[RMDB]
RNA sequence: GGGAACGACUCGAGUAGAGUCGAAAAAGCAACGAGUGUGUGUGGGACGUUUUAUCGCAAGCUCUGAGUAGAGCACGCGCUCACACACACCGCGAGCGAGCAUCAGCAGAGCGCAAACGCUGGUAAAGAUGUUGGCGCAGUUCGCUGCGCCAACAUCAAAAGAAACAACAACAACAAC
Reactivity to DMS in 0.01 (KOAc 150mM, MgCl2 10mM, bicine 150mM(pH8.5), 24C), signal-to-noise 1, nucleotides 027 to 126: a030g040c010a110a100c020g080a270g010u000g010u000g000u000g010u000g010g000g000a130c100g000u000u000u000u000a050u010c050g040c100a130a180g000c000u010c030u040g000a160g030u030a090g020a000g040c010a100c120g000c090g030c000u000c000a000c000a000c000a000c040a000c020c020g000c070g010a160g000c000g010a100g000c000a040u000c020a010g100c030a200g010a180g000c010g000c070a070a040a080c130g000c050u000g000g030u010a050a080a090
Reactivity to 2A3 in 0.01 (KOAc 150mM, MgCl2 10mM, bicine 150mM(pH8.5), 24C), signal-to-noise 1, nucleotides 027 to 126: a000g030c050a100a040c000g020a190g030u010g010u010g000u000g000u020g010g010g060a080c020g010u000u000u180u170a220u220c000g040c140a130a120g010c000u030c010u060g230a200g140u300a010g140a000g050c000a000c030g030c010g030c000u010c000a000c020a010c000a000c010a020c000c000g000c000g010a000g010c000g000a000g020c000a040u100c010a010g000c030a010g060a020g080c100g000c080a090a050a020c010g020c050u010g000g060u150a020a030a000